[RMDB]
RNA sequence: GGGAACGACUCGAGUAGAGUCGAAAAGAUAUGGACUAAUGGGAGGAACUACACUGAGGUGUCGGAAACGACAUGUAGGUGCCGAAGAACAUUAGUCCUAAGUCAAAGCAAUCCUUCGGGAUUGCAACUGACCGUUUAAGUUCGCUUAAACGGUCAGAAAAGAAACAACAACAACAAC
Reactivity to DMS in 0.01 (KOAc 150mM, MgCl2 10mM, bicine 150mM(pH8.5), 24C), signal-to-noise 2, nucleotides 027 to 126: g000a020u000a190u010g010g000a040c000u000a010a000u000g010g000g000a080g000g020a090a050c010u000a120c010a040c160u010g010a090g030g010u000g000u000c020g010g000a050a020a060c010g000a000c000a120u000g000u000a090g020g020u050g010c000c010g000a080a130g000a070a170c000a000u000u000a000g000u000c000c000u000a000a030g000u010c010a120a090a130g030c010a000a000u000c000c000u010u020c180g030g000g010a020u000u000g020c030a010a040
Reactivity to 2A3 in 0.01 (KOAc 150mM, MgCl2 10mM, bicine 150mM(pH8.5), 24C), signal-to-noise 2, nucleotides 027 to 126: g020a010u060a010u120g000g010a010c010u010a000a000u010g030g000g020a060g040g030a100a060c050u120a030c130a010c070u150g180a080g210g230u170g000u060c000g010g010a030a060a010c000g000a020c010a010u170g000u010a020g020g080u130g000c010c020g300a300a030g000a020a020c000a010u010u000a000g000u010c000c000u000a020a000g000u020c040a080a030a080g000c000a000a000u000c010c030u030u090c290g110g020g000a020u020u010g000c000a000a020